Structure probing data (DMS and 2A3) for a 207-nucleotide construct.
Conditions: 150 mM KOAc, 10 mM MgCl2 and 150 mM bicine (pH 8.5), 24 C.
It was measured as part of the RMDB library OK3TST.

[RMDB]
RNA sequence: GGGAACGACUCGAGUAGAGUCGAAAACGUACGUGGAGACACGUACGACGAGACUUCGGUCUCGAAUCGCAUGAACCGGUGCCAUGCGCGCGCGAGGCGUCGGUGGUCGGCGAGCCCACGGACGCAAAAACUCGCGCGUAAAUAAAUAGCAUCGGAAGUGCAAAAUUAUAUUCGUAUAAUUUUGCACAAAAGAAACAACAACAACAAC
Reactivity to DMS in 0.01 (KOAc 150mM, MgCl2 10mM, bicine 150mM(pH8.5), 24C), signal-to-noise 2, nucleotides 027 to 156: c020g020u000a000c000g020u000g000g010a300g000a300c010a020c020g070u000a000c010g000a090c000g010a290g000a020c000u000u000c160g070g090u000c020u000c010g040a010a040u020c010g000c020a080u030g030a210a060c020c040g030g050u000g010c000c060a060u020g040c040g000c100g040c000g030c000g010a060g000g000c010g010u000c010g000g110u020g040g000u000c060g020g000c130g020a300g030c280c000c010a040c000g010g000a030c000g000c130a080a060a090a120a300c000u010c000g000c010g000c000g000u010a010a070a100u000a060a060a160u000a050g010c000a060u000c000g010g000a010a030
Reactivity to 2A3 in 0.01 (KOAc 150mM, MgCl2 10mM, bicine 150mM(pH8.5), 24C), signal-to-noise 2, nucleotides 027 to 156: c020g000u000a000c000g000u000g010g020a050g010a030c000a010c020g010u000a000c000g010a000c000g000a000g000a000c030u080u110c290g090g000u010c010u000c000g030a020a080u130c010g010c000a010u010g020a210a200c000c000g000g000u000g000c020c000a010u000g040c030g000c000g000c000g020c000g000a010g010g040c020g010u020c060g180g010u000g010g000u010c010g020g170c150g030a040g010c000c000c000a000c020g090g000a000c000g000c050a050a040a010a140a140c010u000c000g000c020g010c000g020u000a000a000a010u010a000a000a000u110a010g000c000a000u000c000g000g020a030a050